[RMDB]
RNA sequence: GGGAACGACUCGAGUAGAGUCGAAAAAAAAGAUAUGGAUCCCUAAGGUCCUUUGAUCUAUUACUGAAGCUAUGUCGGAAACGACAUAGCGUGUAAUAGGGAGGACUAUGGGAUCCUAAGUCAAAAACAUCUUCUACCUGUUCGCAGGUAGAAGAUGAAAAGAAACAACAACAACAAC
Reactivity to 2A3 in 0.01 (KOAc 150mM, MgCl2 10mM, bicine 150mM(pH8.5), 24C), signal-to-noise 1, nucleotides 027 to 126: a000a000a000a050g010a000u000a000u020g000g000a000u010c110c010c030u100a300a250g150g040u000c030c010u300u300u000g020a010u070c000u010a000u050u020a010c030u150g200a140a010g000c000u000a000u000g010u030c010g000g000a000a000a000c020g000a000c000a010u000a000g000c000g010u040g000u000a000a000u000a010g000g010g000a000g000g000a010c000u000a050u020g000g050g000a000u000c000c000u000a000a030g000u000c060a000a000a080a000a120
Reactivity to DMS in 0.01 (KOAc 150mM, MgCl2 10mM, bicine 150mM(pH8.5), 24C), signal-to-noise 1, nucleotides 027 to 126: a060a080a100a170g000a010u000a090u010g000g010a030u000c000c000c000u010a150a180g030g010u010c010c000u000u010u030g000a040u010c000u000a010u000u010a010c000u000g000a090a300g010c010u010a000u010g000u000c020g000g000a060a010a010c010g020a010c000a010u000a000g020c000g000u000g010u000a000a000u000a010g000g000g000a000g020g010a020c020u000a160u000g000g000g000a020u000c020c000u000a000a090g000u030c010a060a090a040a050a120